Background:
Structure probing data (2A3 and DMS) for a 170-nucleotide construct. For DMS, 29,566 sequencing reads were counted. 2A3 adducts were read by reverse transcription with SuperScript II with manganese. For DMS the reverse transcriptase was MarathonRT. It was measured as part of the RMDB library 15KLIB.
[RMDB]
RNA sequence: GGGAACGACUCGAGUAGAGUCGAAAACGUCUGCACCUCAGACUAUCCAGCCCGAGGUAAAAGAAGUUGCACCUGUCUAUGAGGCUGAUACCGAACAGACACAGAAUGUUACUGUUAAACCUAAGAGAACGUCUAAUCUUCGGAUUAGACAAAAGAAACAACAACAACAAC
Reactivity to 2A3 in 0.01 (KOAc 150mM, MgCl2 10mM, bicine 150mM(pH8.5), 24C), signal-to-noise 9, nucleotides 027 to 129: c070g000u000c000u010g050c120a090c030c060u090c030a000g000a010c000u010a060u030c050c030a000g030c010c010c040g040a010g030g000u060a050a050a010a030g170a060a020g050u120u120g040c020a020c010c020u050g030u050c030u030a100u130g050a030g050g000c040u040g030a030u080a090c020c010g000a040a020c010a020g060a040c010a000c020a050g110a100a070u120g020u100u120a050c000u010g020u080u070a080a100a040c000c020u050a150a000g100a010g030a170a020c080
Reactivity to DMS in 0.01 (KOAc 150mM, MgCl2 10mM, bicine 150mM(pH8.5), 24C), signal-to-noise 9, nucleotides 027 to 129: c110g020u010c020u020g020c300a060c050c000u010c010a060g010a000c020u010a130u050c080c080a080g030c050c060c040g000a040g030g020u010a060a080a060a040g050a050a060g040u040u040g050c040a100c000c010u000g030u020c070u000a080u040g030a240g020g050c050u040g000a100u050a170c040c030g020a160a040c080a040g010a010c020a120c160a100g030a070a060u030g020u000u000a080c000u010g000u000u000a040a070a060c060c040u000a100a100g030a120g010a120a080c190
Values cover nucleotides 27 to 129.